[RMDB]
RNA sequence: GGGAACGACUCGAGUAGAGUCGAAAAUAAAUUUACUGCUAAGAGCGUGGAUGUUGUAGGUAACAUUAGACUAUGGGGGUGGGAACCCUUGUAGUUUUAUACCAUAUGAUUAUUCGCUGUUACACUGACUAUUAUGCAGGUUCGCCUGCAUAAUAGUAAAAGAAACAACAACAACAAC
Reactivity to 2A3 in 0.01 (KOAc 150mM, MgCl2 10mM, bicine 150mM(pH8.5), 24C), signal-to-noise 2, nucleotides 027 to 126: u060a010a060a020u100u160u140a120c050u090g060c020u060a110a000g050a010g080c020g020u040g030g010a050u070g020u050u010g020u000a000g000g040u040a060a010c020a100u040u080a030g000a010c000u010a000u010g040g000g030g000g060u010g010g060g010a050a020c000c000c000u010u010g010u010a000g000u000u010u000u020a010u020a010c020c000a040u040a020u050g030a040u020u150a040u040u080c010g020c070u020g070u110u030a030c040a020c060u020g040
Reactivity to DMS in 0.01 (KOAc 150mM, MgCl2 10mM, bicine 150mM(pH8.5), 24C), signal-to-noise 3, nucleotides 027 to 126: u010a050a080a070u000u010u010a100c110u010g010c090u010a060a100g010a040g010c020g040u000g000g010a050u010g010u000u010g010u000a030g010g010u010a020a130c230a120u000u000a030g000a000c010u000a000u000g000g000g000g010g030u000g010g020g000a170a030c000c000c010u000u000g010u000a000g000u000u000u000u010a080u000a050c020c010a100u010a040u000g000a030u000u000a090u010u000c060g000c030u010g010u000u000a070c050a050c110u010g000
Background
This 177-nucleotide RNA was probed chemically with 2A3 and DMS. The RNA was probed in 150 mM KOAc, 10 mM MgCl2 and 150 mM bicine (pH 8.5) at 24 C. For DMS, 3,190 sequencing reads were counted. It was measured as part of the RMDB library RFMREP.